[RMDB]
RNA sequence: GGGAACGACUCGAGUAGAGUCGAAAAACUCUCUGCAGUUAAGGUACUGUAACUGUAUUCGUUCUCGUAGUGUCAUCGAGUUAUGACACGAGUGGCUCAUUACUCGAUGAGCCAGUACGAGAGGAGUUCAGUACCGAACUCCAGACGAUCAGAGAGACGUAGCAUGCAUGUUCGCAUGCAUGCUACGAAAAGAAACAACAACAACAAC
Reactivity to 2A3 in 0.01 (KOAc 150mM, MgCl2 10mM, bicine 150mM(pH8.5), 24C), signal-to-noise 4, nucleotides 027 to 156: a000c010u000c000u010c010u010g000c040a050g020u040u090a180a110g010g030u050a030c020u070g140u200a030a020c000u040g050u200a170u090u170c120g060u070u000c050u010c030g010u020a070g040u010g020u000c010a010u000c090g100a090g140u210u100a010u010g000a000c030a010c040g000a080g060u100g020g010c020u020c000a020u000u110a140c080u090c130g020a010u000g000a000g020c020c000a010g030u010a000c000g000a000g020a020g040g010a000g000u000u000c000a010g020u020a000c000c020g010a000a000c000u030c050c020a060g010a130c090g010a060u170c020a000g000a010g000a000g010a010
Reactivity to DMS in 0.01 (KOAc 150mM, MgCl2 10mM, bicine 150mM(pH8.5), 24C), signal-to-noise 2, nucleotides 027 to 156: a050c000u000c000u010c000u000g020c070a050g030u000u000a080a050g010g000u000a030c030u010g000u000a000a030c000u010g030u000a130u010u000c080g010u000u000c020u000c010g010u010a080g020u000g040u000c000a000u000c030g030a220g060u010u010a050u000g000a040c050a060c100g010a120g030u000g020g030c020u020c000a010u000u000a160c160u000c240g010a030u020g010a030g010c070c000a050g030u000a030c010g010a050g020a110g030g020a040g020u000u000c010a030g000u010a030c040c030g000a030a020c010u000c010c040a180g000a090c090g000a120u010c020a020g000a060g000a090g020a300